[RMDB]
RNA sequence: GGGAACGACUCGAGUAGAGUCGAAAAGGUGUUGCAUCGCCGUAUUUGAUCCUCCGGAGGGCAUCAGCUCGCACAAAGCCAUGUUUGUUUACCAUAUGCGUUGCAGCACUCGAGCGGCAUUGGUAUGCCUAUUGGUUGGAUUCGUCCAACCAAUAGGAAAAGAAACAACAACAACAAC
Reactivity to DMS in 0.01 (KOAc 150mM, MgCl2 10mM, bicine 150mM(pH8.5), 24C), signal-to-noise 5, nucleotides 027 to 126: g010g000u000g000u010u000g000c050a040u010c030g000c020c110g010u000a060u020u030u020g010a090u020c010c010u010c020c040g010g010a160g000g000g000c070a050u010c080a090g020c010u000c040g000c100a060c110a080a080a070g000c060c090a070u020g020u020u010u000g020u000u000u000a080c010c030a070u040a050u010g000c000g030u010u010g000c030a060g000c020a050c040u000c040g000a100g000c040g000g000c040a070u000u000g000g000u000a050u020g010
Reactivity to 2A3 in 0.01 (KOAc 150mM, MgCl2 10mM, bicine 150mM(pH8.5), 24C), signal-to-noise 7, nucleotides 027 to 126: g070g000u020g010u050u040g020c030a020u060c010g020c040c040g020u030a150u030u110u140g090a080u030c010c010u050c010c030g100g020a070g040g040g000c010a040u050c040a060g000c010u040c020g050c030a050c050a070a070a020g020c020c030a060u060g030u020u040u050g100u040u110u020a080c000c010a040u040a040u300g030c030g130u170u050g000c020a010g010c000a020c040u080c050g020a050g030c030g030g000c030a040u030u080g040g030u160a080u170g020